[RMDB]
RNA sequence: GGGAACGACUCGAGUAGAGUCGAAAACAUAGCGUUUCACAAUGUGCGCCAUUAACAUUGUUUAUGCAAGCACGUUUCGCAAUGUACGGCGCAGAAACAUUUCCAACACAAAUACGCUUCACGAUGUAAAACAUCGGUGCGUUCGCGCACCGAUGAACGUAUGCGUCAACUUCGGUUGACGCAUACGAAAAGAAACAACAACAACAAC
Reactivity to 2A3 in 0.01 (KOAc 150mM, MgCl2 10mM, bicine 150mM(pH8.5), 24C), signal-to-noise 3, nucleotides 027 to 156: c050a050u150a000g020c020g000u030u060u080c270a140c070a080a050u160g040u040g030c000g000c010c030a020u140u190a060a000c000a020u000u000g060u010u090u100a120u150g100c060a050a080g160c110a160c160g010u030u090u100c030g040c000a010a000u010g010u020a040c020g000g000c000g000c020a000g000a000a020a000c070a020u040u060u070c030c010a110a060c020a000c010a110a120a040u210a030c040g040c040u100u140c160a100c160g080a080u130g020u300a030a010a040a120c000a000u020c000g050g000u010g030c000g000u020u040c240g000c000g000c030a000c000c000g000a000u010g000a000a000